About this RNA: The record gives the reactivity of an RNA of 177 nucleotides to 2A3 and DMS. Reactivities are given for positions 27 through 126. For DMS, 3,639 sequencing reads were counted. It was measured as part of the RMDB library OK1LIB. The reactions ran in a buffer of 150 mM KOAc, 10 mM MgCl2 and 150 mM bicine (pH 8.5), at 24 C.
[RMDB]
RNA sequence: GGGAACGACUCGAGUAGAGUCGAAAAGGGUGGUGUGCGAGCACUGCCGUGCAGAGAGGCUGGUGGCCUUCUCCUGCAAGAAGCGCGGGUUCUGCCCGAGUUGCGGCGCGCGACGCAUGGCCGAGAGUAUCCACGAUCAGUUCGCUGAUCGUGGAUAAAAAGAAACAACAACAACAAC
Reactivity to 2A3 in 0.01 (KOAc 150mM, MgCl2 10mM, bicine 150mM(pH8.5), 24C), signal-to-noise 4, nucleotides 027 to 126: g150g040g010u200g020g020u020g000u030g040c040g020a040g010c010a020c110u150g010c010c000g000u010g000c030a020g030a000g000a010g030g000c070u170g110g150u230g200g000c030c000u210u120c010u020c000c030u020g000c040a050a040g130a110a020g010c040g010c010g040g020g030u100u080c160u300g000c000c000c000g010a030g000u060u160g060c020g010g000c020g000c000g000c020g050a140c020g000c040a070u100g200g000c000c040g020a040g000a000g070
Reactivity to DMS in 0.01 (KOAc 150mM, MgCl2 10mM, bicine 150mM(pH8.5), 24C), signal-to-noise 2, nucleotides 027 to 126: g000g030g050u000g000g030u000g010u020g040c060g020a300g000c030a040c050u030g050c000c000g050u000g020c010a030g000a020g000a050g020g000c000u020g020g000u030g010g000c010c020u010u030c020u000c100c040u030g000c010a050a170g020a110a050g020c030g040c010g000g010g010u000u050c090u040g000c000c000c000g000a050g030u000u030g010c060g030g040c030g000c100g010c100g000a300c030g000c020a090u010g000g050c000c050g010a100g030a130g000